This 177-nucleotide RNA was probed chemically with 2A3 and DMS. DMS adducts were read by reverse transcription with MarathonRT. The DMS profile rests on 4,288 reads. Values cover nucleotides 27 to 126. The RNA was probed in 150 mM KOAc, 10 mM MgCl2 and 150 mM bicine (pH 8.5) at 24 C. For 2A3 the reverse transcriptase was SuperScript II with manganese. For 2A3, 2,663 sequencing reads were counted. It was measured as part of the RMDB library OK2TST.

RNA sequence: GGGAACGACUCGAGUAGAGUCGAAAAAGCAGCGGAAAGAGCGUUCUUCAACAUCCUCGAAAGAAUGGAGGAAGCUUAUCCAAGUUUGAAGGCCAAGUUCCGAACCGGAGUAGGUGUUAUAGAUUGCCGUUCUUGAGGAAUUCGUUCCUCAAGAACGAAAAGAAACAACAACAACAAC
Reactivity to 2A3 in 0.01 (KOAc 150mM, MgCl2 10mM, bicine 150mM(pH8.5), 24C), signal-to-noise 3, nucleotides 027 to 126: a000g080c060a010g050c020g040g030a050a090a040g130a040g020c030g060u070u030c020u070u020c000a050a080c000a130u020c010c000u010c030g130a150a140a100g150a110a100u100g060g020a000g000g010a050a010g000c020u020u040a070u090c040c040a070a020g030u020u050u130g060a030a020g030g000c020c010a070a040g090u010u040c030c000g020a070a060c010c030g050g040a070g050u100a040g000g030u020g030u130u070a070u050a060g150a160u020u160g050c030
Reactivity to DMS in 0.01 (KOAc 150mM, MgCl2 10mM, bicine 150mM(pH8.5), 24C), signal-to-noise 5, nucleotides 027 to 126: a070g010c060a070g020c140g010g030a050a180a090g010a070g030c050g010u000u000c000u000u000c030a030a110c130a160u000c010c020u010c120g000a130a100a130g010a050a060u010g020g000a040g000g000a060a120g000c030u000u020a070u010c060c090a070a240g020u000u010u010g020a070a070g020g000c020c050a070a090g010u000u000c030c020g020a070a080c080c030g020g010a100g010u010a080g010g010u000g010u000u000a080u020a090g010a090u000u000g020c240